RNA sequence: GGGAACGACUCGAGUAGAGUCGAAAAACACUGACCCGAACAUCAUUUGGGCGUCUCAGUGGCUGGUAAAUGACUGUACCAAACCUUCAUUCAUCUAUCUAUAUCCAUUCUGCCGAGUAUUGAAAUCGCCUAUUAGAUGCUUCGGCAUCUAAUAGGCAAAAGAAACAACAACAACAAC
Reactivity to 2A3 in 0.01 (KOAc 150mM, MgCl2 10mM, bicine 150mM(pH8.5), 24C), signal-to-noise 2, nucleotides 027 to 126: a010c050a010c030u060g020a060c000c060c020g030a050a030c020a120u250c070a090u060u050u050g020g010g010c040g180u010c060u030c080a020g030u010g030g050c050u060g010g040u060a040a070a040u090g010a030c040u040g030u110a090c040c000a080a040a120c010c010u090u050c000a040u000u040c010a030u020c050u060a030u040c010u060a050u020a010u150c020c010a020u070u030c020u040g040c030c000g040a020g080u040a070u060u130g140a030a170a130u150c060
Reactivity to DMS in 0.01 (KOAc 150mM, MgCl2 10mM, bicine 150mM(pH8.5), 24C), signal-to-noise 2, nucleotides 027 to 126: a120c010a080c060u000g020a080c040c020c010g000a050a060c070a060u000c220a150u010u000u010g000g020g010c170g000u000c060u010c040a020g020u000g000g030c100u010g020g000u010a020a040a020u000g020a060c060u020g020u000a060c050c040a070a130a120c160c100u000u020c010a040u000u000c040a050u000c080u000a040u000c010u020a100u000a050u000c030c040a000u000u000c080u000g010c030c030g010a060g030u010a050u000u000g010a040a070a070u010c060

An RNA of 177 nucleotides, treated with 2A3 and DMS and read out base by base. The RNA was probed in 150 mM KOAc, 10 mM MgCl2 and 150 mM bicine (pH 8.5) at 24 C. Source: RMDB library OK2TRN, as collected in RNAgym. DMS (dimethyl sulfate) methylates the pairing face of unpaired adenines and cytosines. As a SHAPE reagent, 2A3 marks flexible, mostly unpaired nucleotides at the ribose 2'-OH. The DMS profile rests on 1,155 reads.